The record gives the reactivity of an RNA of 177 nucleotides to DMS and 2A3. Source: RMDB library OK2TRN, as collected in RNAgym. For DMS, 3,321 sequencing reads were counted. Reactivities are given for positions 27 through 126.

RNA sequence: GGGAACGACUCGAGUAGAGUCGAAAAGAAAGGCAGCUAGUGCAGCCCACGCAGCGGCAUGCUUUUGCAUGCCCAGUCGAGCCCACGACUUAGGGCAGCUGCGGCACUGAGGGCAGCUGCCGAAAGACACGCCUAUCAUAUUCGUAUGAUAGGCGUGAAAAGAAACAACAACAACAAC
Reactivity to DMS in 0.01 (KOAc 150mM, MgCl2 10mM, bicine 150mM(pH8.5), 24C), signal-to-noise 4, nucleotides 027 to 126: g010a090a150a150g020g020c010a000g030c010u000a110g000u010g010c230a100g020c010c050c040a170c080g000c070a040g050c070g000g000c000a020u000g010c010u010u000u000u000g030c000a040u000g010c000c000c030a010g000u000c040g000a170g010c020c010c010a300c030g010a020c080u000u000a120g040g000g020c110a130g010c050u000g020c040g010g000c160a100c110u020g000a110g030g000g010c050a050g000c020u000g000c000c000g010a010a070a090g000a220
Reactivity to 2A3 in 0.01 (KOAc 150mM, MgCl2 10mM, bicine 150mM(pH8.5), 24C), signal-to-noise 3, nucleotides 027 to 126: g110a040a080a000g020g020c020a000g000c020u100a050g160u110g210c050a030g020c020c010c010a030c030g020c020a010g000c000g050g010c010a010u020g030c010u190u270u170u300g000c000a010u010g000c000c000c000a000g000u020c010g000a030g010c010c010c000a020c000g040a020c010u060u190a100g000g060g000c010a020g000c000u010g000c000g010g010c090a050c140u110g080a140g030g020g000c010a000g000c000u000g020c020c000g000a000a020a000g040a000